An RNA of 177 nucleotides, treated with DMS and read out base by base. The data come from the RNA Mapping Database (RMDB), library TTRINS. The reactions ran in a buffer of 150 mM KOAc, 10 mM MgCl2 and 150 mM bicine (pH 8.5), at 24 C. The DMS profile rests on 6,315 reads.

RNA sequence: GGGAACGACUCGAGUAGAGUCGAAAAGAUAUGGAAUCGAAGGAGAUGGUCUAGGAACAGGUUUGUUGCUAUCGGAAACGAUAGACAACAAACCUGUUCCUAGACCUAAUCUCCCGAUUCCUAAGUCCAUAAGAUAGGGGUUCGCCCCUAUCUUAUGAAAAGAAACAACAACAACAAC
Reactivity to DMS in 0.01 (KOAc 150mM, MgCl2 10mM, bicine 150mM(pH8.5), 24C), signal-to-noise 3, nucleotides 027 to 126: g000a130u010a300u010g000g000a020a010u000c000g010a250a190g010g010a010g000a020u000g000g010u000c010u000a000g000g000a010a010c000a010g000g010u000u000u000g010u000u000g000c000u000a010u000c000g000g000a140a110a270c000g010a030u000a010g010a110c000a010a020c000a000a000a010c000c000u000g000u010u010c000c000u000a000g010a000c000c000u000a010a040u000c000u000c000c010c010g000a010u000u000c000c000u000a020a090g000u010c040